[RMDB]
RNA sequence: GGGAACGACUCGAGUAGAGUCGAAAAAUAUCCUAAGCAAUCUAUUUUUACUAUUAAUAGUGUGGUCCAAAAGGAUGGUGUUGAAAACACUCCUCCUCACUAUUUUACUCUUGGAUGCAAAAUUUUACGAUCUCUAGCUUCGGCUAGAGAAAAAGAAACAACAACAACAAC
Reactivity to 2A3 in 0.01 (KOAc 150mM, MgCl2 10mM, bicine 150mM(pH8.5), 24C), signal-to-noise 6, nucleotides 027 to 129: a020u120a070u010c000c000u020a100a030g000c000a030a140u000c020u050a130u040u100u060u110u160a080c030u040a090u180u080a020a010u000a020g010u000g010u010g000g050u100c120c100a070a100a070a000g020g030a000u170g060g110u010g040u020u100g150a090a060a010a000c010a000c000u000c000c010u000c020c000u000c010a000c000u000a000u000u040u020u050a090c040u020c030u130u070g030g000a010u020g030c020a030a090a140a220u100u160u060u090a100c060g050a040
Reactivity to DMS in 0.01 (KOAc 150mM, MgCl2 10mM, bicine 150mM(pH8.5), 24C), signal-to-noise 2, nucleotides 027 to 129: a070u000a140u050c000c030u030a080a050g010c040a000a000u030c050u010a080u020u090u050u050u020a110c140u010a100u040u000a020a040u000a040g020u010g020u000g010g000u070c140c210a130a060a090a040g080g000a040u040g040g060u000g020u060u060g070a090a050a080a080c010a020c020u030c010c010u030c010c000u060c000a050c000u000a020u010u020u100u000a070c090u030c060u060u050g050g020a040u000g050c020a000a000a120a050u000u000u000u000a070c170g030a050

Source: RMDB library 15KLIB, as collected in RNAgym. Chemical mapping of a 170-nucleotide RNA with 2A3 and DMS. The 2A3 profile rests on 9,326 reads. Reactivities are rounded to 0.1 and cut off at 0 and 3. Values cover nucleotides 27 to 129. The reactions ran in a buffer of 150 mM KOAc, 10 mM MgCl2 and 150 mM bicine (pH 8.5), at 24 C.